[RMDB]
RNA sequence: GGGAACGACUCGAGUAGAGUCGAAAAAAUGUUCUGACAUCAUCCUCUUGAAUCCGAUUGACUGUUGCUUUUGAUCCGGUCCGCUCAGGAUAUACAAUCUCGUCAAUGAAUUCAUUUUCUAUAUCCGAUCGCUCAAGACUAUUAACUCGCGCAAUGGCCUACUCCCAGAGUUCGCUCUGGGAGUAGGAAAAGAAACAACAACAACAAC
Reactivity to 2A3 in 0.01 (KOAc 150mM, MgCl2 10mM, bicine 150mM(pH8.5), 24C), signal-to-noise 1, nucleotides 027 to 156: a170a000u060g000u060u070c070u170g080a110c050a180u120c000a020u000c000c040u060c020u050u070g050a000a000u020c020c070g000a030u030u080g080a100c080u010g060u160u100g000c060u020u270u030u090g050a070u010c000c020g060g040u060c040c080g040c050u000c040a050g000g010a050u010a000u010a060c020a020a060u000c030u020c110g140u080c010a020a160u040g130a100a150u050u030c010a000u070u010u070u000c010u060a070u000a070u100c020c070g070a080u200c020g080c000u020c050a000a070g010a010c040u020a040u250u070a170a110c060u010c020g030c010g010c170a090a020u220g020g020
Chemical mapping of a 207-nucleotide RNA with 2A3. Reactivities are given for positions 27 through 156. For 2A3, 344 sequencing reads were counted. The reactions ran in a buffer of 150 mM KOAc, 10 mM MgCl2 and 150 mM bicine (pH 8.5), at 24 C. It was measured as part of the RMDB library OK3TST.